[RMDB]
RNA sequence: GGGAACGACUCGAGUAGAGUCGAAAAGAGGCCAGGCUUGUACCACUACUGCUUCAUGGCCCCGUACACCCACUUCACCCAGGCCCUCGCUGACGCCAGCCUGAGGAACAUGGUGCAGGCGGAGCAGCGUCCCUAGUAACUUCGGUUACUAGGGACGAAAAGAAACAACAACAACAAC
Reactivity to 2A3 in 0.01 (KOAc 150mM, MgCl2 10mM, bicine 150mM(pH8.5), 24C), signal-to-noise 3, nucleotides 027 to 126: g060a040g010g040c020c030a020g050g010c040u120u140g040u060a080c030c060a040c130u130a020c020u040g030c000u040u050c080a110u060g020g010c000c020c000c000g030u070a020c000a090c040c030c020a030c050u080u060c020a070c030c020c000a020g050g010c010c000c020u030c040g030c040u050g050a060c050g040c030c010a010g000c020c010u060g020a140g070g010a040a020c040a090u170g040g020u070g030c020a010g050g000c020g020g020a040g010c020a010g030
Reactivity to DMS in 0.01 (KOAc 150mM, MgCl2 10mM, bicine 150mM(pH8.5), 24C), signal-to-noise 4, nucleotides 027 to 126: g010a130g020g010c000c010a040g000g020c050u010u030g010u000a090c080c100a110c200u010a160c050u000g000c020u000u000c080a130u000g000g010c010c000c010c030g000u010a100c110a120c030c010c020a150c160u000u000c040a110c040c010c030a080g000g010c010c030c050u000c060g030c030u000g000a090c140g000c040c050a140g000c030c020u000g000a080g000g010a080a110c180a110u000g010g010u000g010c050a050g010g000c030g000g000a070g020c040a070g000
The record gives the reactivity of an RNA of 177 nucleotides to 2A3 and DMS. Source: RMDB library OK2TST, as collected in RNAgym. 2A3 adducts were read by reverse transcription with SuperScript II with manganese. The 2A3 profile rests on 4,311 reads. The RNA was probed in 150 mM KOAc, 10 mM MgCl2 and 150 mM bicine (pH 8.5) at 24 C.